[RMDB]
RNA sequence: GGGAACGACUCGAGUAGAGUCGAAAAGGCGGAUCGGUCCCAACAUCUUACUGAUGGCGUUGAUAGCAGCAAAGAUACCAUCGAACCACCGCGACCAGAAAAACUGUUACUUCCGCGCGAAGAAACCCUCAAACAAGGAUUUCGAUCCUUGUUUGAGAAAAGAAACAACAACAACAAC
Reactivity to DMS in 0.01 (KOAc 150mM, MgCl2 10mM, bicine 150mM(pH8.5), 24C), signal-to-noise 3, nucleotides 027 to 126: g010g000c030g000g020a070u000c080g000g050u000c030c000c040a170a140c150a040u000c070u000u000a140c110u000g020a040u000g020g010c070g000u010u000g000a100u010a060g020c040a020g000c060a040a050a190g010a080u000a070c060c040a040u000c040g010a120a100c070c010a030c050c030g000c040g020a140c090c050a130g000a080a050a040a080a060c120u010g010u000u000a040c080u010u010c010c040g010c130g010c070g020a060a080g010a090a100a110c100c160
Reactivity to 2A3 in 0.01 (KOAc 150mM, MgCl2 10mM, bicine 150mM(pH8.5), 24C), signal-to-noise 2, nucleotides 027 to 126: g100g010c030g000g000a070u110c110g030g030u060c030c030c000a030a020c040a030u050c020u070u090a100c060u100g020a030u020g050g000c050g010u030u050g040a090u070a090g000c030a000g000c040a110a050a040g070a050u090a060c000c000a020u010c010g040a040a050c020c010a020c060c000g000c000g020a070c020c040a030g230a070a130a020a000a000c030u070g000u070u040a050c010u040u000c000c010g110c010g010c060g080a000a010g000a050a070a010c010c010
An RNA of 177 nucleotides, treated with DMS and 2A3 and read out base by base. The RNA was probed in 150 mM KOAc, 10 mM MgCl2 and 150 mM bicine (pH 8.5) at 24 C. For 2A3 the reverse transcriptase was SuperScript II with manganese. High 2A3 reactivity points to a flexible backbone, as in loops and unpaired stretches. The data come from the RNA Mapping Database (RMDB), library OK2TRN.